[RMDB]
RNA sequence: GGGAACGACUCGAGUAGAGUCGAAAAGAUAUGGACCUGUACCAGUCAACAGCCACCCAUCGGAAACGAUGGUGUGGACAUGACUGACAGGUCCUAAGUCAAAGAGUCGCUGGUUCGCCAGCGACUCCGAUGAUAGGACCUUCGGGUCCUAUCAUCGAAAAGAAACAACAACAACAAC
Reactivity to DMS in 0.01 (KOAc 150mM, MgCl2 10mM, bicine 150mM(pH8.5), 24C), signal-to-noise 3, nucleotides 027 to 126: g010a040u000a020u020g000g010a020c000c010u010g020u010a250c300c050a020g000u000c000a170a100c250a180g020c000c000a010c010c000c000a000u010c000g020g000a010a020a020c000g010a000u000g000g010u000g010u000g000g030a000c060a110u000g010a010c000u000g000a070c000a010g010g010u000c000c000u000a000a030g000u000c010a130a160a160g000a010g010u000c000g010c000u010g010g000u000u020c290g000c000c000a020g010c010g010a000c000u000c010
Reactivity to 2A3 in 0.01 (KOAc 150mM, MgCl2 10mM, bicine 150mM(pH8.5), 24C), signal-to-noise 1, nucleotides 027 to 126: g010a000u000a010u050g000g010a000c000c000u020g030u100a300c150c090a030g020u020c120a290a040c080a300g000c030c010a010c000c000c000a010u000c000g030g000a030a000a000c020g000a000u010g000g080u100g020u010g050g000a000c000a140u290g000a000c010u000g030a000c000a000g050g000u000c000c000u000a000a000g000u000c000a000a200a000g010a000g000u000c000g000c000u000g060g080u100u180c300g010c150c010a000g020c020g000a010c000u000c000